[RMDB]
An RNA of 207 nucleotides, treated with 2A3 and read out base by base. Conditions: 150 mM KOAc, 10 mM MgCl2 and 150 mM bicine (pH 8.5), 24 C. It was measured as part of the RMDB library M2RFPK. High 2A3 reactivity points to a flexible backbone, as in loops and unpaired stretches. The 2A3 profile rests on 738 reads.
RNA sequence: GGGAACGACUCGAGUAGAGUCGAAAAAGGGAAGAAAAUAAUUUAGAAAGGAGAUUCCGCCCCGGCUUGCGGUGCGGCCGAAAGGCUGUAAGGCAUCCCGGAGAGGGGAGGCAAGGCGAAAGCCAAAAACGGUACACCAUCUUCGGAUGGUGUACAAGAACUUGUUACAGUUCGCUGUAACAAGUUCAAAAGAAACAACAACAACAAC
Reactivity to 2A3 in 0.01 (KOAc 150mM, MgCl2 10mM, bicine 150mM(pH8.5), 24C), signal-to-noise 1, nucleotides 027 to 156: a000g100g030g040a060a010g050a060a110a060a090u140a090a080u150u140u300a040g050a040a100a010g020g020a060g010a060u110u000c040c030g000c050c000c040c010g000g000c020u040u030g030c040g190g000u020g030c000g030g010c000c000g040a010a010a000g000g000c000u010g030u080a050a010g110g000c010a020u000c000c010c000g010g000a060g020a030g010g000g000g000a000g000g000c010a000a060g000g000c030g110a070a000a040g010c060c000a050a090a000a040a000c100g020g010u000a000c000a000c000c000a000u000c000u080u030c130g020g010a010u000g000g000u000g000u000a000c000a000a010